This 177-nucleotide RNA was probed chemically with 2A3 and DMS.

RNA sequence: GGGAACGACUCGAGUAGAGUCGAAAAGAACCAACACUGCAGAGAUACUGAAACACUUCAUGUUUUGUGCACUACAAGGACCCUAUGAUCAGAAUAAAAAAGAACAACUAGUCUAUAAGAUACUGCACUCUAAUAUUUCCUUCGGGAAAUAUUAGAGAAAAGAAACAACAACAACAAC
Reactivity to 2A3 in 0.01 (KOAc 150mM, MgCl2 10mM, bicine 150mM(pH8.5), 24C), signal-to-noise 1, nucleotides 027 to 126: g000a030a010c010c010a000a030c020a000c050u030g010c030a010g020a020g040a070u040a150c060u080g060a020a070a000c060a030c040u050u120c030a100u110g040u080u060u060u070g070u060g020c040a030c030u080a040c030a000a030g040g010a070c010c020c010u040a080u060g020a050u120c030a010g080a090a040u210a090a040a020a040a010a030g060a030a010c010a020a030c020u040a020g010u000c010u030a150u010a230a030g040a050u040a120c030u050g030c040a040
Reactivity to DMS in 0.01 (KOAc 150mM, MgCl2 10mM, bicine 150mM(pH8.5), 24C), signal-to-noise 2, nucleotides 027 to 126: g010a180a130c040c020a080a080c080a080c090u010g000c030a070g010a120g010a070u010a040c080u000g000a070a080a080c090a040c110u020u000c160a060u000g030u000u000u010u000g020u010g010c070a090c070u000a080c070a060a080g000g000a060c020c050c020u000a040u000g010a070u000c040a100g010a070a070u060a010a060a080a080a050a060g020a040a030c070a020a060c070u000a020g000u000c020u000a080u010a100a100g000a120u000a020c090u000g000c090a130
Background
DMS adducts were read by reverse transcription with MarathonRT. The 2A3 profile rests on 1,870 reads.